[RMDB]
RNA sequence: GGGAACGACUCGAGUAGAGUCGAAAAGCAGGGGUAUUUCUACUCAUCCGCUUCUACCCCUUAAUAGAAACUAACAAACUAGUUCAAACUAUAACACUAUGCCUAGGAGCUAUCACCACCUUAUUUACAGCACUAUGUGCAAUCACACAAAAUGAUACCAUGAAGUCACCUUCGGGUGACUUCAUGGAAAAGAAACAACAACAACAAC
Reactivity to 2A3 in 0.01 (KOAc 150mM, MgCl2 10mM, bicine 150mM(pH8.5), 24C), signal-to-noise 1, nucleotides 027 to 156: g030c000a000g000g000g000g020u050a060u050u220u010c030u060a060c050u030c040a040u020c010c050g000c140u130u000c030u000a000c000c000c000c000u010u140a050a000u050a150g160a050a040a020c050u100a010a010c050a120a100a030c060u000a000g000u090u100c040a140a050a000c010u030a030u080a220a070c060a000c070u040a090u200g020c000c000u000a010g000g000a020g040c030u010a030u060c040a000c070c030a050c010c000u010u050a100u090u170u030a040c000a020g000c000a000c000u130a040u300g010u010g010c020a000a050u100c050a000c030a010c000a050a060a050a100u130g000a010u020a060
Conditions: 150 mM KOAc, 10 mM MgCl2 and 150 mM bicine (pH 8.5), 24 C. This 207-nucleotide RNA was probed chemically with 2A3. For 2A3 the reverse transcriptase was SuperScript II with manganese. The data come from the RNA Mapping Database (RMDB), library PDB130.